RNA sequence: GGGAACGACUCGAGUAGAGUCGAAAAGAGGAGUCAUUCGUGACUCCUCAAAGGGAGCUCAACUCUCCCGCUCAAGUCCGACAGCCUUCGGACCCAAAAGAAUGCUGUUCCUGUUCGCAGGAACAAACACGUAUUGGAUGUUCGCAUCCAAUACGUGAAAAGAAACAACAACAACAAC
Reactivity to DMS in 0.01 (KOAc 150mM, MgCl2 10mM, bicine 150mM(pH8.5), 24C), signal-to-noise 4, nucleotides 027 to 126: g000a010g030g010a040g020u000c000a050u000u030c220g020u000g010a010c000u000c000c010u000c000a000a030a040g020g000g000a010g010c210u010c260a080a140c240u010c000u000c000c010c010g010c070u000c090a100a160g000u000c000c010g040a080c150a130g020c060c120u000u000c030g010g000a080c010c040c070a000a050a080a050g000a110a090u010g000c100u000g000u000u000c000c000u000g000u010u000c140g050c020a010g000g000a000a000c020a040a050a180
Reactivity to 2A3 in 0.01 (KOAc 150mM, MgCl2 10mM, bicine 150mM(pH8.5), 24C), signal-to-noise 4, nucleotides 027 to 126: g000a000g010g000a010g000u010c020a020u120u120c170g100u070g000a000c000u000c010c000u000c000a000a000a000g000g000g000a010g000c020u050c210a020a070c060u020c010u000c060c000c000g030c010u100c050a080a020g020u000c010c000g020a050c050a090g100c020c030u040u030c010g010g010a010c000c020c010a070a150a000a030g180a090a070u170g050c070u050g040u010u010c010c000u010g060u030u060c270g020c060a000g010g020a010a000c010a010a030a010
Source: RMDB library M2PK50, as collected in RNAgym. Structure probing data (DMS and 2A3) for a 177-nucleotide construct. For DMS the reverse transcriptase was MarathonRT. The RNA was probed in 150 mM KOAc, 10 mM MgCl2 and 150 mM bicine (pH 8.5) at 24 C. The DMS profile rests on 2,729 reads. For 2A3, 7,436 sequencing reads were counted.